RNA sequence: GGGAACGACUCGAGUAGAGUCGAAAACAUCACCCUCGGUGAGAUAAUUCAGCGCGUUCUCCCCAGCUUCAACUAUACCGAAGACACUACGCGCGGGAGACAGGCGGCCAUAAGAUUUAUCAUGUUCGGGGCAGCCGGCAACCCGGUGCGCGUGCGGGAUCGGGAAUGUAUUCGUACAUUCCCGAUCAAAAGAAACAACAACAACAAC
Reactivity to 2A3 in 0.01 (KOAc 150mM, MgCl2 10mM, bicine 150mM(pH8.5), 24C), signal-to-noise 3, nucleotides 027 to 156: c070a070u100c040a080c010c000c000u060c100g020g000u050g040a060g000a120u170a150a170u180u120c160a110g030c010g010c030g040u100u010c030u000c020c000c010c020a020g010c000u060u070c040a110a090c060u130a080u170a300c030c060g020a010a000g050a080c070a010c070u110a020c020g000c020g000c000g000g000g010a020g030a030c070a120g070g000c000g020g020c010c000a130u180a280a030g040a030u000u160u190a160u230c040a060u160g120u120u080c060g020g000g020g000c000a000g000c000c000g000g000c030a030a050c010c010c020g040g060u100g010c010g000c010g000u020g000c030g010g060
Reactivity to DMS in 0.01 (KOAc 150mM, MgCl2 10mM, bicine 150mM(pH8.5), 24C), signal-to-noise 2, nucleotides 027 to 156: c070a120u010c060a100c020c000c050u000c130g020g000u050g000a070g030a110u020a100a110u010u000c030a080g060c050g020c040g010u020u000c050u000c030c000c000c000a220g030c040u000u000c080a050a160c080u000a080u000a130c030c010g010a030a100g000a230c060a050c030u020a010c030g040c030g030c030g000g000g000a070g000a160c050a080g000g050c020g010g050c030c000a160u000a090a170g010a090u010u000u000a130u010c120a070u000g030u000u020c020g030g000g020g030c030a070g000c000c020g020g000c040a080a120c000c000c030g020g000u000g030c030g000c050g030u020g020c020g020g000